[RMDB]
RNA sequence: GGGAACGACUCGAGUAGAGUCGAAAAUUGGCUGCAGCAGCUGUCACAGAAGUGCAGUCCUCUCAGCAUGCGUGUAUGUGUGCGUAUUGCACCGGCAAGUCACUCAGCUGCUCAAGAGUGUUGCCUGAUAUAUCAUAAAUUUCGAUUUAUGAUAUAUAAAAGAAACAACAACAACAAC
Reactivity to 2A3 in 0.01 (KOAc 150mM, MgCl2 10mM, bicine 150mM(pH8.5), 24C), signal-to-noise 9, nucleotides 027 to 126: u110u100g040g000c020u030g010c040a020g000c000a000g000c020u040g050u180c030a040c020a140g200a260a020g070u050g040c010a010g020u040c000c030u020c000u010c010a020g000c000a010u030g010c020g050u100g050u130a110u220g140u070g030u040g020c020g010u040a060u060u190g000c020a020c030c010g030g000c040a060a040g080u120c010a020c040u020c010a020g010c010u040g000c010u030c030a050a070g040a030g040u050g010u040u040g030c000c000u010g020
Reactivity to DMS in 0.01 (KOAc 150mM, MgCl2 10mM, bicine 150mM(pH8.5), 24C), signal-to-noise 9, nucleotides 027 to 126: u030u020g000g010c030u010g010c100a050g010c020a040g000c010u010g000u030c170a100c130a110g010a170a090g010u000g010c030a040g000u010c030c070u010c060u010c090a100g010c010a050u010g010c040g010u030g010u030a060u030g010u010g020u000g000c030g010u020a030u020u020g000c010a050c060c080g000g000c130a080a070g000u030c070a080c080u010c010a050g010c010u000g000c030u000c070a080a100g000a070g000u000g000u000u000g000c030c010u010g010